[RMDB]
The record gives the reactivity of an RNA of 207 nucleotides to 2A3. Reactivities are given for positions 27 through 156. It was measured as part of the RMDB library OK3TST.
RNA sequence: GGGAACGACUCGAGUAGAGUCGAAAACAAACUACACACCAGAGCAAGCCCUUCUUAUUGCUAAAGGUAAGACAUUCUCAGAGGUGCUAGGCAACGGAGCAGAAACUCCAGAGCAAGUCACAGCAGGAUCAAACCCUGAUUACUUACCAAAAGAGGAGUUUUACUGCCCAUUCGUGGGCAGUAAAACAAAAGAAACAACAACAACAAC
Reactivity to 2A3 in 0.01 (KOAc 150mM, MgCl2 10mM, bicine 150mM(pH8.5), 24C), signal-to-noise 1, nucleotides 027 to 156: c020a090a000a000c040u300a100c090a000c010a030c050c100a030g010a000g130c000a090a000g030c000c020c000u070u120c040u050u130a070u040u100g060c000u100a220a010a030g020g000u000a040a040g060a040c070a150u150u040c000u000c090a050g070a090g130g050u050g030c010u020a090g080g060c020a080a000c030g000g010a000g000c040a080g220a080a050a020c000u000c000c000a010g000a010g000c030a050a100g030u070c030a000c030a080g010c000a000g050g040a040u110c100a070a060a120c010c000c000u000g010a000u020u020a060c030u060u010a000c030c010a090a020a000a000g020a020g010g000a070